RNA sequence: GGGAACGACUCGAGUAGAGUCGAAAAAAAUGAGUUUGUGCAAGCCUUCAACAGUAGCGACGGCGCCAAGCACCUUUUGUUCGCAACAAGUUUGCUUUGCUAGCCAGACAUCAACACGACAUCGUAGUCACUUUUGGUCUUUCGAGACCAAAAGUGAAAAAGAAACAACAACAACAAC
Reactivity to DMS in 0.01 (KOAc 150mM, MgCl2 10mM, bicine 150mM(pH8.5), 24C), signal-to-noise 2, nucleotides 027 to 126: a040a100a050u060g020a090g000u030u030u020g000u010g000c040a020a140g010c000c090u000u000c060a010a180c140a140g010u010a020g040c070g030a040c070g030g000c040g000c070c070a060a120g000c050a010c090c080u020u000u000u000g010u000u000c140g030c090a160a050c090a010a060g020u050u000u000g000c010u000u000u000g000c060u020a170g000c060c010a040g000a090c060a050u000c070a130a050c100a040c050g040a080c100a120u030c020g010u000a110g040
Reactivity to 2A3 in 0.01 (KOAc 150mM, MgCl2 10mM, bicine 150mM(pH8.5), 24C), signal-to-noise 4, nucleotides 027 to 126: a000a000a040u210g020a050g040u070u060u090g020u090g030c040a080a010g020c020c010u090u070c090a100a100c020a150g130u210a030g030c070g040a030c040g010g000c020g000c020c020a030a030g000c000a050c020c000u060u110u090u030g070u080u080c100g030c050a030a050c000a060a060g020u040u180u050g000c000u000u010u030g020c010u030a070g000c010c030a040g030a030c020a140u090c040a040a070c030a000c060g100a010c020a100u110c070g080u050a040g040